[RMDB]
RNA sequence: GGGAACGACUCGAGUAGAGUCGAAAAGGGUGAUGUCUCCUAACCUUUAUCAAUGGGGGCACUCGGUCGUGCUGUGGGUACAAAUUUUAUUUCGUGCCUACCUUAGACGCUUGUCGUCGGGAGUAUGUGGGACUGAUGAACUUCGGUUCAUCAGUAAGUAUAAGCAAAGAUUCGUCUUUGCUUAUACAAAAGAAACAACAACAACAAC
Reactivity to DMS in 0.01 (KOAc 150mM, MgCl2 10mM, bicine 150mM(pH8.5), 24C), signal-to-noise 4, nucleotides 027 to 156: g010g030g020u000g010a110u000g010u000c010u010c010c000u010a110a090c060c040u010u000u000a110u020c110a100a110u000g030g050g000g020g020c030a070c030u000c040g000g020u000c040g000u000g000c050u010g020u000g010g020g010u000a030c000a010a020a060u010u000u010u000a090u010u020u000c040g030u000g000c020c000u000a030c010c090u000u010a140g010a070c040g010c070u000u000g020u010c010g010u000c010g010g000g000a130g020u000a060u000g010u000g010g010g000a070c000u000g000a020u000g000a010a010c010u000u000c300g040g010u000u000c000a000u000c010a010g000u000a000a150
Reactivity to 2A3 in 0.01 (KOAc 150mM, MgCl2 10mM, bicine 150mM(pH8.5), 24C), signal-to-noise 9, nucleotides 027 to 156: g050g000g010u110g030a100u050g020u010c010u030c020c010u040a080a110c020c010u110u260u130a200u170c120a080a100u170g000g000g000g000g000c000a010c020u010c010g030g000u020c030g030u030g040c070u050g020u040g020g000g010u030a010c010a020a070a050u150u270u140u140a160u050u100u140c070g000u010g000c000c000u020a030c000c000u040u070a050g000a010c010g020c050u160u250g130u300c020g000u010c000g000g040g000a070g050u100a090u170g050u110g010g010g020a000c000u000g000a000u000g000a000a000c000u020u030c130g060g000u000u000c000a000u000c000a000g000u000a010a010
This 207-nucleotide RNA was probed chemically with DMS and 2A3. For DMS, 15,644 sequencing reads were counted. The RNA was probed in 150 mM KOAc, 10 mM MgCl2 and 150 mM bicine (pH 8.5) at 24 C. Reactivities are given for positions 27 through 156.